[RMDB]
Chemical mapping of a 207-nucleotide RNA with 2A3 and DMS. Values are in units of 0.01, from 0 to 300, in steps of 10. For 2A3 the reverse transcriptase was SuperScript II with manganese. Reactivities are given for positions 27 through 156. Conditions: 150 mM KOAc, 10 mM MgCl2 and 150 mM bicine (pH 8.5), 24 C. The data come from the RNA Mapping Database (RMDB), library M2RFPK. The DMS profile rests on 7,207 reads.
RNA sequence: GGGAACGACUCGAGUAGAGUCGAAAAUAACACUGGCGGCUGCGUAUCACUCUAUGGUACGUGAUAGUGCGAUAUAAGAAGCACUGGUACAUGCCGGCAGGGACAGUUAAGAGAUGGCCGCAGUCUCAAAAGGGGUCAUUCUUCGGAAUGACCCCAACCAAUUCAUAAUGUUCGCAUUAUGAAUUGGAAAAGAAACAACAACAACAAC
Reactivity to 2A3 in 0.01 (KOAc 150mM, MgCl2 10mM, bicine 150mM(pH8.5), 24C), signal-to-noise 6, nucleotides 027 to 156: u070a020a030c030a000c040u030g200g010c010g010g000c020u040g000c010g010u010a000u010c010a040c120u150c070u170a180u220g000g000u010a000c010g010u020g040a050u070a040g000u000g000c020g010a010u050a030u070a300a090g150a140a000g010c000a000c000u010g020g030u130a080c040a040u180g000c000c020g020g000c000a010g010g010g030a040c070a090g020u040u060a110a030g010a000g000a010u040g050g030c050c020g050c050a010g010u000c010u000c020a050a110a020a020g000g000g000g000u000c000a000u010u000c010u040u070c190g070g000a000a000u000g000a000c000c000c000c000a000a000
Reactivity to DMS in 0.01 (KOAc 150mM, MgCl2 10mM, bicine 150mM(pH8.5), 24C), signal-to-noise 3, nucleotides 027 to 156: u010a060a100c040a030c010u000g000g020c000g010g010c020u010g000c020g020u000a010u000c000a030c080u010c240u010a140u000g040g010u000a010c010g060u010g010a120u010a010g020u010g020c010g010a130u000a170u010a110a190g000a180a300g000c000a010c000u000g010g020u000a100c100a100u000g020c010c020g030g000c040a050g020g010g020a080c060a100g020u010u000a100a170g000a080g010a050u000g020g020c020c070g020c080a240g020u000c010u000c020a050a050a180a120g010g010g030g020u010c000a020u000u000c000u000u000c270g030g000a010a020u000g010a020c000c010c000c000a000a020